RNA sequence: GGGAACGACUCGAGUAGAGUCGAAAAUUUACGGUAUUCGUACCGUAAACGAGCAAGCAAGCUGCGCAACGAGACAAGACGAUAAUAAGAUCGAGCAUGCUGAUAGUAGGAUCUUCGGAUCCUACAACCUUGUCCGUCAUUUCGAUGACGGACAAGGAAAAGAAACAACAACAACAAC
Reactivity to DMS in 0.01 (KOAc 150mM, MgCl2 10mM, bicine 150mM(pH8.5), 24C), signal-to-noise 2, nucleotides 027 to 126: u000u000u000a020c030g050g010u000a030u000u000c180g030u000a010c000c000g010u000a000a030a010c130g000a110g010c080a050a090g010c100a030a020g000c010u010g020c040g020c110a060a070c060g000a110g000a060c130a040a110g010a090c030g030a020u000a070a120u000a090a140g000a070u000c010g000a110g000c040a090u000g000c040u000g010a120u020a110g010u000a010g000g010a000u000c000u000u000c110g050g000a000u000c000c010u000a000c000a060a140
Reactivity to 2A3 in 0.01 (KOAc 150mM, MgCl2 10mM, bicine 150mM(pH8.5), 24C), signal-to-noise 2, nucleotides 027 to 126: u000u010u000a000c000g000g000u000a030u020u100c180g090u030a010c000c000g000u010a010a000a010c070g030a040g070c070a120a000g050c020a020a040g040c040u040g050c050g000c050a050a060c040g030a010g040a090c060a080a040g050a040c050g010a030u070a150a050u160a200a070g090a150u050c010g000a030g060c020a030u100g000c020u040g030a070u080a030g010u000a000g000g000a000u000c000u020u000c170g030g000a000u020c000c000u000a000c000a000a000